The record gives the reactivity of an RNA of 177 nucleotides to 2A3 and DMS. Conditions: 150 mM KOAc, 10 mM MgCl2 and 150 mM bicine (pH 8.5), 24 C.

RNA sequence: GGGAACGACUCGAGUAGAGUCGAAAACCGGGGCCAGCUGGGCCCCAGCGGCUCGCCCCUCGGCGGGGCCGGGAGCCGCGCCAGUCGGAGCCCCUGGCUGAGGGCGGUCAGCCAGCUUCUCAGCGCCAGUAAGUAACCGUUUCGACGGUUACUUACUAAAAGAAACAACAACAACAAC
Reactivity to 2A3 in 0.01 (KOAc 150mM, MgCl2 10mM, bicine 150mM(pH8.5), 24C), signal-to-noise 3, nucleotides 027 to 126: c020c020g010g000g010g000c000c020a030g010c020u020g000g000g050c030c010c010c010a000g010c010g010g000c000u010c020g020c010c010c010c020u070c080g300g000c140g010g000g020g000c010c000g160g050g030a000g000c000c010g000c000g000c010c000a040g020u110c070g130g000a080g030c020c000c000c030u040g080g000c000u010g000a020g010g020g000c070g000g040u070c010a020g150c030c010a020g010c010u300u190c010u020c000a000g000c010g030c030c010
Reactivity to DMS in 0.01 (KOAc 150mM, MgCl2 10mM, bicine 150mM(pH8.5), 24C), signal-to-noise 2, nucleotides 027 to 126: c050c030g000g000g000g000c020c040a180g010c030u020g000g000g000c020c000c030c010a000g000c000g000g000c000u000c020g020c010c000c000c000u010c300g030g000c290g000g000g010g060c140c300g000g000g000a030g000c000c030g020c020g010c020c000a040g000u010c060g000g020a170g000c020c000c030c010u020g000g000c000u000g000a020g010g000g000c000g050g000u010c190a140g000c070c030a130g000c050u010u010c030u000c000a010g000c010g000c180c080

The DMS profile rests on 2,746 reads. 2A3 adducts were read by reverse transcription with SuperScript II with manganese.